RNA sequence: GGGAACGACUCGAGUAGAGUCGAAAAAAAACAUCACAGACAAGGAGCUUUGUGAGUCAUUGACAAAAGAAUUUAAAUGUUCUGGAGUUCCACCUAGUAGUUGGCCGGAGGUGCAGAUGGCACUUGAACUCCGUUAGAAAUUCGUUUCUAACGGAGUAAAAGAAACAACAACAACAAC
Reactivity to DMS in 0.01 (KOAc 150mM, MgCl2 10mM, bicine 150mM(pH8.5), 24C), signal-to-noise 4, nucleotides 027 to 126: a060a040a060a070c050a080u010c020a050c050a050g010a070c070a110a070g000g000a120g010c110u000u000u000g020u000g010a090g010u000c050a080u010u000g010a030c100a050a120a110a020g020a050a040u000u000u000a060a050a100u010g010u000u000c010u010g010g010a300g000u000u000c060c030a060c060c030u000a060g030u000a040g020u000u000g020g010c040c040g020g010a050g010g000u000g000c060a050g010a070u000g000g020c040a060c040u000u000g010a130
Reactivity to 2A3 in 0.01 (KOAc 150mM, MgCl2 10mM, bicine 150mM(pH8.5), 24C), signal-to-noise 1, nucleotides 027 to 126: a000a000a000a000c070a040u070c030a020c060a090g050a080c010a070a050g090g000a020g040c030u140u060u030g110u100g010a050g010u060c000a070u040u090g020a010c060a040a090a040a000g000a040a030u080u170u180a250a300a090u200g040u030u010c050u050g050g020a030g030u020u070c000c010a000c000c000u000a050g060u000a020g030u110u090g050g040c000c050g040g000a040g020g000u000g000c010a020g010a170u170g020g020c030a030c000u030u030g010a000